[RMDB]
RNA sequence: GGGAACGACUCGAGUAGAGUCGAAAACCGGGAAUUCGUUCCCGGAAAAACCGUAGGCACUGACUUCUGAACACCGUUGAAACAGGCUUCGAAAGAGGCCUGUGGAGGUGUCAGAAGCAAUGGUGCCUAAACGGAAAAAUCGAGUUUCGACUCGAAACAAUAGAAUCUAGUUCGCUAGAUUCUAUUGAAAAGAAACAACAACAACAAC
Reactivity to DMS in 0.01 (KOAc 150mM, MgCl2 10mM, bicine 150mM(pH8.5), 24C), signal-to-noise 2, nucleotides 027 to 156: c000c000g010g010g010a030a060u000u020c210g020u010u000c000c000c000g020g000a000a020a060a080a070c020c010g020u000a030g000g010c000a010c010u000g000a070c000u000u000c000u010g020a120a050c010a020c000c010g000u000u010g010a300a210a020c010a010g020g020c000u000u000c000g010a170a100a300g020a030g000g020c010c010u000g010u010g000g000a170g020g060u000g000u000c020a010g010a020a020g000c030a040a060u020g010g010u000g010c000c000u000a000a020a070c020g010g010a060a060a060a120a120u000c000g010a040g010u000u000u010c190g010a130c020u000c000g000a050a100a220
Reactivity to 2A3 in 0.01 (KOAc 150mM, MgCl2 10mM, bicine 150mM(pH8.5), 24C), signal-to-noise 5, nucleotides 027 to 156: c010c000g030g000g000a050a060u110u090c130g040u070u030c020c000c020g000g010a120a030a000a020a010c010c010g000u010a010g000g000c000a010c010u100g260a070c000u160u000c010u010g090a220a030c000a000c000c010g240u300u040g000a010a010a000c010a000g000g000c000u000u010c000g070a140a090a090g000a010g010g000c000c010u000g000u010g000g010a020g000g000u000g000u000c000a000g000a000a000g000c000a010a010u060g010g000u000g000c020c000u000a000a000a000c010g020g050a060a070a020a020a050u050c010g000a000g000u050u130u110c120g100a050c020u000c010g000a030a020a000
The record gives the reactivity of an RNA of 207 nucleotides to DMS and 2A3.
The 2A3 profile rests on 6,822 reads.
The RNA was probed in 150 mM KOAc, 10 mM MgCl2 and 150 mM bicine (pH 8.5) at 24 C.
2A3 adducts were read by reverse transcription with SuperScript II with manganese.